Description
This 207-nucleotide RNA was probed chemically with 2A3 and DMS. For DMS, 3,474 sequencing reads were counted. For DMS the reverse transcriptase was MarathonRT. The reactions ran in a buffer of 150 mM KOAc, 10 mM MgCl2 and 150 mM bicine (pH 8.5), at 24 C. For 2A3, 1,932 sequencing reads were counted.

RNA sequence: GGGAACGACUCGAGUAGAGUCGAAAAACUGUGUUAACGCUCUCACCGUCCUGUUUAGCUAUUUGAGAAUACCAAACGUAGAUUUGUGCGUUAGCUGAUAGUGUGCGCUUUUCAGACCAUGGCUCAAUGGUGAUUUUGAGCGCUCCGCUAUGCCUGAUCACUGUCAUGGAUUCGUCCAUGACAGUGAAAAAGAAACAACAACAACAAC
Reactivity to 2A3 in 0.01 (KOAc 150mM, MgCl2 10mM, bicine 150mM(pH8.5), 24C), signal-to-noise 3, nucleotides 027 to 156: a010c060u100g040u010g000u140u030a030a010c010g000c000u000c010u030c040a020c040c050g040u060c020c020u090g050u060u080u090a040g020c040u040a140u090u140u150g100a100g040a050a030u080a120c020c030a030a020a030c030g050u050a050g020a300u040u060u090g060u050g010c010g010u010u060a020g000c030u060g060a040u010a050g030u020g000u030g000c000g000c020u030u000u050u090c050a010g050a080c010c000a020u010g080g070c070u090c220a050a050u020g000g040u040g080a220u020u050u090u150g010a000g000c000g000c000u040c050c000g000c010u020a020u040g050c000c020u020g050a050
Reactivity to DMS in 0.01 (KOAc 150mM, MgCl2 10mM, bicine 150mM(pH8.5), 24C), signal-to-noise 2, nucleotides 027 to 156: a150c060u010g000u000g050u010u000a000a050c040g010c020u000c030u000c070a080c050c040g030u010c020c010u000g030u010u000u000a080g020c010u010a090u010u010u000g060a190g000a140a100u000a060c020c020a030a040a050c090g030u020a170g020a120u000u000u010g030u000g030c040g000u000u000a060g010c010u030g040a080u000a040g030u000g020u010g010c060g010c020u000u010u000u010c090a170g020a060c020c010a010u000g010g000c180u000c140a040a060u000g010g020u000g000a150u000u010u010u010g010a010g030c000g000c000u000c080c030g030c030u050a030u000g020c010c020u010g000a300